[RMDB]
RNA sequence: GGGAACGACUCGAGUAGAGUCGAAAAAAGGCUGCGCCGAAAGAGCUCGUCGGCGUCGGCGACGUCCAGUGUCGCGUCCAGCGCCGACUCCACGAACGCCGCGGUUUGGGCCCUGUCGAGCGGCUCGACCGUGGAGAGUAUUCGUACUCUCCACGGUAAAAGAAACAACAACAACAAC
Reactivity to 2A3 in 0.01 (KOAc 150mM, MgCl2 10mM, bicine 150mM(pH8.5), 24C), signal-to-noise 2, nucleotides 027 to 126: a060a000g040g010c000u030g030c030g020c120c010g070a060a120a010g060a010g000c040u060c140g050u030c020g040g000c000g020u050c030g110g040c040g000a010c000g060u090c110c050a160g140u130g070u230c030g010c000g070u130c050c040a030g020c010g010c020c010g000a000c000u000c010c010a070c020g060a170a050c080g040c090c020g000c040g010g010u070u170u220g030g000g030c000c000c010u030g150u100c060g030a050g000c030g030g030c010u010c030g030
Reactivity to DMS in 0.01 (KOAc 150mM, MgCl2 10mM, bicine 150mM(pH8.5), 24C), signal-to-noise 3, nucleotides 027 to 126: a080a080g000g010c020u000g010c060g000c130c010g010a040a090a080g010a070g000c040u000c110g000u000c040g030g020c020g010u000c040g030g020c020g020a010c010g020u020c140c170a160g020u000g000u010c030g010c020g000u000c120c080a170g000c040g000c010c010g010a040c010u020c120c060a060c020g000a140a130c100g010c100c060g020c030g010g010u000u000u020g010g000g010c010c020c010u010g000u010c060g000a190g010c050g000g020c030u000c070g010
Chemical mapping of a 177-nucleotide RNA with 2A3 and DMS. For DMS the reverse transcriptase was MarathonRT. The RNA was probed in 150 mM KOAc, 10 mM MgCl2 and 150 mM bicine (pH 8.5) at 24 C. For 2A3 the reverse transcriptase was SuperScript II with manganese.